[RMDB]
RNA sequence: GGGAACGACUCGAGUAGAGUCGAAAAAGAUUUGCUUUUUGGACGUUGUUUUGCACUUCUGUAAAUACAUCCUCUUCAGAAGCUUUUCUCAUUGGUAUCAACUAUUUGGGUGAUUUUGCACAGGGCCCAUUUAUAGAUGGUAACACUGUACACGCCAGCCAACCGUAUAGUUCGCUAUACGGUUGGCAAAAGAAACAACAACAACAAC
Reactivity to 2A3 in 0.01 (KOAc 150mM, MgCl2 10mM, bicine 150mM(pH8.5), 24C), signal-to-noise 1, nucleotides 027 to 156: a000g020a030u050u010u090g030c010u050u100u060u070u170g080g010a060c070g000u010u000g030u000u000u000u000g010c000a030c050u160u070c070u220g040u090a050a130a020u220a010c070a090u000c020c000u000c020u150u030c030a010g060a060a000g000c000u060u020u020u000c040u000c040a040u000u150g020g020u030a020u020c000a000a040c010u050a010u010u010u010g000g000g000u110g050a240u120u140u200u290g110c050a030c080a140g250g080g040c010c000c000a010u010u150u150a130u010a060g020a040u060g000g000u010a000a000c040a010c020u030g080u110a050c140a030c110g150c180c060a030
Source: RMDB library OK3TST, as collected in RNAgym.
The record gives the reactivity of an RNA of 207 nucleotides to 2A3.